[RMDB]
RNA sequence: GGGAACGACUCGAGUAGAGUCGAAAACUUCUUCACGCGAAAGCUUUGAGGUUACAGUCUCAGGGGGGAGUACGUUCGCAAGAGUGAAACUUAAAGAAAUUGACGGAAUGGCACCACAAGACGUGGAGCGUGCGGUUUAAUUUGACUCAACACGGGGCAUAUGAUACUACUUCGGUAGUAUCAUAUGAAAAGAAACAACAACAACAAC
Reactivity to 2A3 in 0.01 (KOAc 150mM, MgCl2 10mM, bicine 150mM(pH8.5), 24C), signal-to-noise 4, nucleotides 027 to 156: c010u070u020c020u070u060c060a030c070g030c010g070a120a060a040g000c030u100u070u140g020a020g020g030u050u180a050c040a070g060u000c040u050c100a070g000g000g050g000g020g010a010g030u040a080c030g010u010u030c060g010c070a030a060g030a010g020u060g010a040a040a020c030u060u070a110a080a030g060a040a110a070u130u140g020a010c030g040g030a060a030u040g050g010c010a000c010c010a020c050a090a050g120a040c060g010u020g010g000a000g010c030g010u060g030c010g000g000u030u010u010a020a060u000u040u060g040a030c010u000c040a040a020c040a040c060g010g010g010g010
Reactivity to DMS in 0.01 (KOAc 150mM, MgCl2 10mM, bicine 150mM(pH8.5), 24C), signal-to-noise 3, nucleotides 027 to 156: c030u000u000c010u000u000c060a070c130g020c040g020a120a120a130g000c010u000u000u040g010a070g000g030u010u000a110c090a170g000u000c020u000c020a120g020g020g000g010g010g000a110g050u000a030c060g000u000u010c050g040c040a070a080g000a130g040u000g010a110a050a080c060u000u010a050a070a110g010a060a070a100u010u000g000a070c050g020g010a090a070u000g000g030c030a090c010c020a060c030a080a080g030a120c080g010u000g000g000a090g030c060g030u000g020c020g010g020u000u000u010a050a190u010u000u000g020a050c000u000c020a050a080c040a050c020g010g040g010g000